An RNA of 177 nucleotides, treated with 2A3 and DMS and read out base by base. The 2A3 profile rests on 2,048 reads. Conditions: 150 mM KOAc, 10 mM MgCl2 and 150 mM bicine (pH 8.5), 24 C. DMS adducts were read by reverse transcription with MarathonRT. For 2A3 the reverse transcriptase was SuperScript II with manganese.
RNA sequence: GGGAACGACUCGAGUAGAGUCGAAAAUACUCACGCACUUUGCGACGAACUCGGGGGUUAUAUACCAAAAGUAAUAUUUCAAAAGGGAAGUAUAGUACCUAAUUCAACGAGCGUGUCGUACACAAUACUACUCACUACGGUUCGCCGUAGUGAGUAGAAAAGAAACAACAACAACAAC
Reactivity to 2A3 in 0.01 (KOAc 150mM, MgCl2 10mM, bicine 150mM(pH8.5), 24C), signal-to-noise 3, nucleotides 027 to 126: u040a000c000u030c000a080c050g120c010a100c050u130u160u170g020c040g000a010c010g010a060a020c010u010c010g020g010g010g000g010u050u060a090u000a010u030a110c020c000a000a120a010a000g050u080a060a200u060a120u130u160u170c110a050a120a030a050g070g030g030a080a000g040u120a020u040a260g050u000a030c010c000u040a040a120u120u110c070a080a040c040g010a010g040c030g020u120g000u050c000g010u050a020c050a010c010a070a050u100a100
Reactivity to DMS in 0.01 (KOAc 150mM, MgCl2 10mM, bicine 150mM(pH8.5), 24C), signal-to-noise 2, nucleotides 027 to 126: u030a040c090u000c030a080c190g000c130a050c050u000u010u010g010c010g000a010c000g000a030a050c000u000c010g000g000g000g020g000u000u000a010u000a130u020a090c020c040a060a110a090a140g010u010a070a050u000a040u000u000u000c080a030a110a150a080g010g000g000a060a130g000u030a020u000a030g010u010a060c040c030u010a000a050u000u000c050a040a040c030g020a020g000c040g080u010g000u000c050g010u030a060c190a130c220a090a050u000a130